[RMDB]
About this RNA: An RNA of 177 nucleotides, treated with 2A3 and DMS and read out base by base.

RNA sequence: GGGAACGACUCGAGUAGAGUCGAAAAGCAGCCGCAGCUGUUCGUGCUCGGCCUUGACAGCUGCAUCGUCCAUGAGCGCACGGAAACCACGCUCGAGCGCGAGUUGCACUACGGCAACGCGACGGUAUCACUAGGAAAAUUUCGAUUUUCCUAGUGAAAAAGAAACAACAACAACAAC
Reactivity to 2A3 in 0.01 (KOAc 150mM, MgCl2 10mM, bicine 150mM(pH8.5), 24C), signal-to-noise 9, nucleotides 027 to 126: g010c040a010g040c020c040g000c020a010g010c020u020g050u130u050c030g030u040g010c020u050c090g100g010c020c010u090u120g040a040c020a020g010c040u050g010c010a060u040c020g070u000c050c050a120u190g040a020g020c050g000c040a030c070g060g040a140a110a040c040c020a030c050g010c010u080c050g020a030g000c020g000c000g010a020g020u040u050g020c050a040c100u200a050c080g070g010c020a040a040c070g010c020g030a060c020g020g010u050a060
Reactivity to DMS in 0.01 (KOAc 150mM, MgCl2 10mM, bicine 150mM(pH8.5), 24C), signal-to-noise 9, nucleotides 027 to 126: g020c070a130g010c050c080g010c040a030g000c030u000g010u000u000c120g010u000g010c020u010c070g010g010c060c050u000u000g010a060c060a080g000c050u000g000c020a100u000c060g010u000c050c080a130u010g000a070g020c040g020c060a100c120g000g010a090a090a120c060c050a080c120g010c030u000c010g000a060g000c050g010c010g000a070g010u000u000g010c020a090c120u010a080c150g010g000c010a050a050c080g000c030g000a080c060g010g010u000a160